[RMDB]
RNA sequence: GGGAACGACUCGAGUAGAGUCGAAAAUUGUGGUCAAGACCUUGGCGUAGUAUCCAAGGUUGUCAAGGUUCCUAUUGAGUUAACAAUGAUUGAGUUUAUGUUAUGGUGUAAGGAUGGACAGGGGAAAGGAAAGUAGCUUAUUCGUAAGCUACUUUCCAAAAGAAACAACAACAACAAC
Reactivity to DMS in 0.01 (KOAc 150mM, MgCl2 10mM, bicine 150mM(pH8.5), 24C), signal-to-noise 5, nucleotides 027 to 126: u000u000g020u000g000g010u010c100a110a150g010a020c000c000u000u000g000g000c220g010u000a190g010u010a110u010c010c010a020a010g000g000u000u000g010u000c050a030a070g010g000u000u000c020c010u000a090u000u000g000a180g010u000u010a050a060c060a050a040u000g000a080u000u010g010a120g010u000u000u000a050u010g010u000u000a070u010g000g010u000g010u000a070a070g010g000a060u010g000g000a060c050a070g010g000g000g000a070a090a120
Reactivity to 2A3 in 0.01 (KOAc 150mM, MgCl2 10mM, bicine 150mM(pH8.5), 24C), signal-to-noise 3, nucleotides 027 to 126: u020u030g040u050g030g090u110c070a090a040g020a000c000c000u020u020g010g000c050g100u120a040g040u050a120u080c020c010a010a000g000g020u010u010g000u020c010a030a050g040g000u000u030c000c000u020a070u000u140g060a090g040u040u120a060a000c050a080a080u080g040a120u060u170g050a090g160u030u070u060a070u090g110u060u060a110u180g030g010u070g030u060a040a010g040g040a050u100g010g010a000c030a020g000g000g000g000a040a050a000
Annotation:
Structure probing data (DMS and 2A3) for a 177-nucleotide construct. For DMS the reverse transcriptase was MarathonRT.